[RMDB]
This 177-nucleotide RNA was probed chemically with DMS. The RNA was probed in 150 mM KOAc, 10 mM MgCl2 and 150 mM bicine (pH 8.5) at 24 C. Source: RMDB library OK2TRN, as collected in RNAgym. The DMS profile rests on 1,331 reads.
RNA sequence: GGGAACGACUCGAGUAGAGUCGAAAACGAAACAGGCGAUGCUAAGUCCGUGAAGCCGUUCCGGACCCUUCGGGGAAUGGAAAGUGGUGGAGCCGACGGACCAGACUUGCAGUAGGUGAGUGAUGGGUAAAAGGUUCCAGUUCGCUGGAACCUUUUAAAAAGAAACAACAACAACAAC
Reactivity to DMS in 0.01 (KOAc 150mM, MgCl2 10mM, bicine 150mM(pH8.5), 24C), signal-to-noise 3, nucleotides 027 to 126: c100g010a110a170a130c120a030g000g040c030g010a300u000g010c040u000a110a230g000u010c010c200g010u000g000a300a300g000c010c000g010u010u000c000c000g000g000a300c000c000c010u000u010c100g040g000g000g000a020a220u020g010g000a000a010a020g010u010g000g040u000g000g010a250g000c050c180g000a010c000g020g010a120c300c040a050g000a240c000u000u000g000c070a110g010u000a100g000g000u000g000a060g010u000g000a050u000g000g010g010